RNA sequence: GGGAACGACUCGAGUAGAGUCGAAAACACAUUCUAUUCGUAGAAUGUGGAACGUAGAGAGAUCGACAGCGUCGCUGCUAUGUCGAACGAGGAAGAGCGCGCAGGGAUCGGGCUUCGGCCCGAUCAAUCGGGACUAGACAUUCGUGUCUAGUCCCGAAAAAGAAACAACAACAACAAC
Reactivity to DMS in 0.01 (KOAc 150mM, MgCl2 10mM, bicine 150mM(pH8.5), 24C), signal-to-noise 1, nucleotides 027 to 126: c000a010c010a020u010u000c000u000a040u000u020c200g020u000a010g010a000a000u000g020u000g000g000a060a050c080g000u000a070g000a080g010a140g010a070u000c020g010a020c060a050g020c040g020u000c160g070c130u000g000c040u000a040u000g000u000c020g000a080a130c110g000a120g020g000a040a020g000a080g000c030g050c070g000c080a100g010g010g010a000u010c000g000g000g020c020u010u020c190g040g000c000c000c000g020a000u000c000a040a070